[RMDB]
RNA sequence: GGGAACGACUCGAGUAGAGUCGAAAAUGGUGUUAAGUGGAAUAAGUGGAAAAAUAUACAUAUAUGUACAGGGGGCUACAUAUAUGUAUAUGCCCCCUCGCGUUAGUAUAAGUAGGUAUAAGGUGGAAUUUUAUAGUACGUUCGCGUACUAUAAAAUAAAAGAAACAACAACAACAAC
Reactivity to 2A3 in 0.01 (KOAc 150mM, MgCl2 10mM, bicine 150mM(pH8.5), 24C), signal-to-noise 4, nucleotides 027 to 126: u110g040g010u060g030u110u110a110a060g020u040g060g050a080a100u070a190a040g050u100g020g030a070a060a010a100a000u020a000u010a010c010a000u030a000u030a000u050g020u030a030c100a070g000g000g000g060g050c010u000a000c000a010u060a010u020a010u040g020u010a010u000a000u020g010c010c000c000c000c010u000c000g020c010g020u020u050a000g030u010a050u010a150a050g050u040a030g080g040u070a100u030a150a000g020g030u050g040g000a020
Reactivity to DMS in 0.01 (KOAc 150mM, MgCl2 10mM, bicine 150mM(pH8.5), 24C), signal-to-noise 6, nucleotides 027 to 126: u020g010g010u010g010u000u000a030a120g010u010g000g010a100a050u020a060a080g030u010g000g000a020a080a070a100a060u000a010u000a010c000a030u010a020u010a010u000g000u010a050c160a090g010g020g000g010g010c100u000a020c030a010u000a040u010a020u020g000u000a010u010a020u010g010c070c020c000c010c020u000c030g010c050g010u010u010a070g010u010a030u020a030a090g000u010a030g000g010u010a050u020a050a100g010g010u020g010g020a090